[RMDB]
RNA sequence: GGGAACGACUCGAGUAGAGUCGAAAAGAAAGAAAGAAAUUAGCUCGCCAGUUAGCGAGGUCUGUCCCCACACGACAGAUAAUCGGGUGCAACUCCCGCCCCUUUUCCGAGGGUCAUCGGUACCAAAAAAACUCAGGCAACUUCGGUUGCCUGAGAAGUGUCUAGUAAUGUUCGCAUUACUAGACACAAAAGAAACAACAACAACAAC
Reactivity to DMS in 0.01 (KOAc 150mM, MgCl2 10mM, bicine 150mM(pH8.5), 24C), signal-to-noise 1, nucleotides 027 to 156: g010a070a060a080g010a130a140a110g000a070a050a110u000u000a180g020c000u000c010g040c000c010a300g040u010u000a110g010c050g010a030g030g010u000c010u000g020u000c000c030c000c300a050c090a080c220g000a040c010a030g000a060u000a160a050u000c030g020g000g000u020g020c040a080a300c030u000c000c010c010g040c070c000c040c010u000u000u020u000c100c000g000a030g000g020g000u010c070a060u000c020g000g000u010a100c000c090a000a000a020a120a090a110a110c000u000c000a060g030g000c000a000a000c000u000u000c300g040g000u000u000g000c010c000u000g000a000g000a000a090
Reactivity to 2A3 in 0.01 (KOAc 150mM, MgCl2 10mM, bicine 150mM(pH8.5), 24C), signal-to-noise 4, nucleotides 027 to 156: g030a010a080a000g080a020a080a020g060a050a140a060u130u050a110g030c000u000c000g000c010c050a170g140u160u140a010g020c000g000a000g000g000u000c000u000g020u000c020c020c040c000a040c010a000c060g020a010c010a000g010a020u040a040a050u090c000g000g010g000u010g000c010a010a010c010u000c000c000c010g020c000c000c000c010u110u150u120u010c000c000g000a000g010g000g030u060c040a010u000c000g010g030u020a080c030c060a030a070a030a020a040a050a120c000u000c000a000g000g000c000a000a000c010u030u050c100g080g000u010u000g000c000c000u000g000a000g000a000a010

Notes
Chemical mapping of a 207-nucleotide RNA with DMS and 2A3. The RNA was probed in 150 mM KOAc, 10 mM MgCl2 and 150 mM bicine (pH 8.5) at 24 C. The data come from the RNA Mapping Database (RMDB), library M2RFPK. In probing experiments dimethyl sulfate is read out at A N1 and C N3, which are open when not base-paired. 2A3 adducts were read by reverse transcription with SuperScript II with manganese. 2A3 is a SHAPE reagent: it acylates the 2'-hydroxyl of flexible nucleotides of all four kinds. The 2A3 profile rests on 3,802 reads.